An RNA of 177 nucleotides, treated with 2A3 and DMS and read out base by base.
RNA sequence: GGGAACGACUCGAGUAGAGUCGAAAAGACCUUGCGCACCCCGUGCUCCUGAGCCUUGCGUGCGGCGUUCUCAGCAGCCAACUGCGCGGCGAACGGAGUCGAUUUCCGCGAUCCUUUGAAGCCAACAACGAUUACCAUCGUUCGCGAUGGUAAUCGUAAAAGAAACAACAACAACAAC
Reactivity to 2A3 in 0.01 (KOAc 150mM, MgCl2 10mM, bicine 150mM(pH8.5), 24C), signal-to-noise 1, nucleotides 027 to 126: g000a060c020c000u050u150g000c000g000c050a060c000c010c000c030g050u090g030c000u000c000c020u020g020a010g000c000c060u100u180g000c050g040u010g010c030g020g000c000g050u180u030c130u020c060a110g030c060a050g000c020c010a000a100c070u120g010c030g000c000g000g010c010g010a020a010c060g010g010a010g000u010c020g060a170u040u030u000c020c020g040c080g020a090u060c000c010u090u050u100g060a060a020g030c060c000a020a080c060a030
Reactivity to DMS in 0.01 (KOAc 150mM, MgCl2 10mM, bicine 150mM(pH8.5), 24C), signal-to-noise 2, nucleotides 027 to 126: g010a100c070c020u010u000g040c050g040c120a150c060c050c010c040g000u000g000c020u000c120c040u010g000a260g020c020c020u020u000g030c070g030u010g010c230g000g010c050g000u000u020c110u020c050a140g000c180a100g020c060c070a170a150c110u000g050c000g000c090g000g020c060g000a100a220c180g050g000a020g000u000c080g010a160u000u010u000c050c010g030c070g010a100u000c020c010u000u020u000g000a110a120g000c030c010a040a080c250a080
The reactions ran in a buffer of 150 mM KOAc, 10 mM MgCl2 and 150 mM bicine (pH 8.5), at 24 C. For DMS, 1,212 sequencing reads were counted.